This 177-nucleotide RNA was probed chemically with 2A3 and DMS. The data come from the RNA Mapping Database (RMDB), library OK1LIB. In probing experiments dimethyl sulfate is read out at A N1 and C N3, which are open when not base-paired. The RNA was probed in 150 mM KOAc, 10 mM MgCl2 and 150 mM bicine (pH 8.5) at 24 C. The 2A3 profile rests on 63,660 reads.
RNA sequence: GGGAACGACUCGAGUAGAGUCGAAAAUCACGUGUUUAAUGUCAACUAUGCUGGUAUGGGGCACGACGUAUGUAAGCAUAGAUAGACUACAUACGCAGUAGUCAGUAGUCUAUCAGAACUGACUGCAGAUAGUUAUCUGAUUCGUCAGGUAACUAUCAAAAGAAACAACAACAACAAC
Reactivity to 2A3 in 0.01 (KOAc 150mM, MgCl2 10mM, bicine 150mM(pH8.5), 24C), signal-to-noise 9, nucleotides 027 to 126: u110c030a030c080g030u040g050u020u050u100a170a100u130g020u020c000a020a010c040u030a020u050g010c010u040g030g030u050a060u050g020g000g030g010c020a010c020g060a010c020g040u030a020u090g160u080a040a030g010c010a020u020a040g020a030u070a020g020a020c010u010a000c010a040u080a020c040g000c100a050g050u070a010g020u030c020a000g000u020a010g010u000c030u050a130u080c050a030g030a030a030c030u020g020a010c000u010g000c010a020
Reactivity to DMS in 0.01 (KOAc 150mM, MgCl2 10mM, bicine 150mM(pH8.5), 24C), signal-to-noise 9, nucleotides 027 to 126: u020c060a140c100g010u010g000u000u010u010a060a080u030g010u000c030a060a120c060u010a020u010g000c000u010g000g010u000a020u000g000g000g000g010c060a030c050g000a100c020g010u010a010u010g010u030a040a040g010c020a030u010a040g010a070u010a070g010a040c010u000a020c050a070u010a050c100g010c140a130g010u020a050g000u020c070a070g000u010a040g000u000c040u010a060u010c150a080g000a090a070c080u010g000a020c010u000g000c040a150